The data come from the RNA Mapping Database (RMDB), library M2PK90. The record gives the reactivity of an RNA of 177 nucleotides to 2A3 and DMS. The DMS profile rests on 1,377 reads. Values are in units of 0.01, from 0 to 300, in steps of 10. Reactivities are given for positions 27 through 126. DMS adducts were read by reverse transcription with MarathonRT.
RNA sequence: GGGAACGACUCGAGUAGAGUCGAAAAACAUAGUUUGGCCGACGUCAUACCAUUGAAGACGAAUCGUUAAAGACACCAGCACGUCUUAUAGGAGCCCAUUUAGCAAAAACAGUCCUGUAGGAACCAAUACUAUUGUCGGUUUCGACCGACAAUAGUAAAAAGAAACAACAACAACAAC
Reactivity to 2A3 in 0.01 (KOAc 150mM, MgCl2 10mM, bicine 150mM(pH8.5), 24C), signal-to-noise 1, nucleotides 027 to 126: a000c020a020u220a040g100u000u070u060g060g000c020c010g040a050c000g040u020c020a020u060a180c000c050a110u110u090g090a080a000g030a020c040g030a010a040u060c060g030u090u100a090a100a060g060a000c010a040c030c020a000g030c030a000c100g060u000c000u010u100a060u060a030g040g000a040g020c030c020c030a050u070u090u050a080g030c040a000a040a090a000a070c010a030g110u010c040c000u050g030u060a050g020g070a030a020c020c010a040a050
Reactivity to DMS in 0.01 (KOAc 150mM, MgCl2 10mM, bicine 150mM(pH8.5), 24C), signal-to-noise 2, nucleotides 027 to 126: a140c050a060u000a060g010u000u000u010g000g020c070c030g030a110c020g030u010c040a090u010a090c080c060a080u000u010g000a050a120g000a090c050g010a050a070u010c080g020u000u000a050a030a130g010a080c050a090c030c060a060g000c020a070c140g000u000c030u000u000a070u000a090g000g000a120g000c020c010c010a060u000u000u020a120g010c090a020a010a040a030a090c130a050g010u000c010c010u000g010u000a070g000g000a040a080c110c120a050a100